[RMDB]
RNA sequence: GGGAACGACUCGAGUAGAGUCGAAAACAUGGCGGCUGUGCUGCUUGCGGGUGCGGGCGUUGUUGCCUUCACGAACAUGAUGCGCUCGGCCUUCGUGACGGUGAUGCAGACUGCGAGCUUUGUGCUCGCUGGGCAGCACGUUCGCGUGCUGCCCAGCAAAAGAAACAACAACAACAAC
Reactivity to DMS in 0.01 (KOAc 150mM, MgCl2 10mM, bicine 150mM(pH8.5), 24C), signal-to-noise 2, nucleotides 027 to 126: c030a130u010g000g040c010g010g000c030u000g020u020g000c080u000g040c000u000u000g050c060g000g000g010u000g010c020g010g010g000c050g020u030u030g010u000u010g000c020c010u000u000c090a040c100g000a070a100c180a240u080g030a050u030g000c070g000c050u000c000g000g010c060c260u000u000c040g040u000g000a040c050g020g000u000g000a090u000g050c050a100g000a110c140u000g000c030g030a020g000c000u000u020u010g040u010g000c000u000c010
Reactivity to 2A3 in 0.01 (KOAc 150mM, MgCl2 10mM, bicine 150mM(pH8.5), 24C), signal-to-noise 4, nucleotides 027 to 126: c030a010u080g090g000c030g000g040c010u050g030u100g080c020u010g030c000u050u080g020c010g020g060g040u040g040c020g000g040g010c010g010u060u120g050u060u060g070c000c000u020u040c000a030c040g020a070a010c010a050u160g030a070u110g050c020g020c090u010c010g020g000c000c010u040u050c020g020u050g030a010c040g050g030u030g020a090u140g050c020a040g060a150c080u050g010c030g030a040g030c000u120u260u300g050u230g000c020u040c000
Chemical mapping of a 177-nucleotide RNA with DMS and 2A3. It was measured as part of the RMDB library OK1LIB. DMS (dimethyl sulfate) methylates the pairing face of unpaired adenines and cytosines. DMS adducts were read by reverse transcription with MarathonRT. For 2A3, 2,554 sequencing reads were counted.